This 177-nucleotide RNA was probed chemically with DMS and 2A3. The reactions ran in a buffer of 150 mM KOAc, 10 mM MgCl2 and 150 mM bicine (pH 8.5), at 24 C. For 2A3, 43,047 sequencing reads were counted. It was measured as part of the RMDB library TTRDEL.
RNA sequence: GGGAACGACUCGAGUAGAGUCGAAAAGAUAUGGAACGAAUGCCAUUGUCAGAGAGUCUUAUCGGAAACGAUAACUCUCUUGGAUUUAUGGCACUAUUCCUAAGUCAAACAGUCGUUCGCGACUGAACUUCUAUCUAAUGUUCGCAUUAGAUAGAAGAAAAGAAACAACAACAACAAC
Reactivity to DMS in 0.01 (KOAc 150mM, MgCl2 10mM, bicine 150mM(pH8.5), 24C), signal-to-noise 9, nucleotides 027 to 126: g010a040u000a300u000g000g000a020a020c100g010a060a090u000g000c000c000a010u000u000g010u000c000a090g010a010g000a010g010u000c140u000u000a000u000c000g000g000a100a090a210c000g010a010u000a010a020c010u000c000u000c000u000u010g010g010a010u000u010u000a000u000g010g010c000a010c060u000a250u000u000c000c000u000a070a160g010u000c030a120a120a240c020a010g010u000c000g010u000u010c220g030c020g010a030c010u000g000a050a150
Reactivity to 2A3 in 0.01 (KOAc 150mM, MgCl2 10mM, bicine 150mM(pH8.5), 24C), signal-to-noise 9, nucleotides 027 to 126: g020a020u100a050u190g000g010a040a030c070g070a300a270u030g000c010c000a010u000u030g020u020c010a000g000a000g000a000g010u020c050u190u020a000u010c010g040g010a100a050a030c010g000a000u000a010a010c000u000c000u000c000u000u080g010g010a010u120u300u210a020u020g000g000c000a000c010u020a020u010u000c000c010u020a150a050g080u050c050a060a110a150c010a070g010u000c010g040u110u140c300g020c010g150a010c000u020g030a060a080
2A3 is a SHAPE reagent: it acylates the 2'-hydroxyl of flexible nucleotides of all four kinds. For DMS, 22,767 sequencing reads were counted.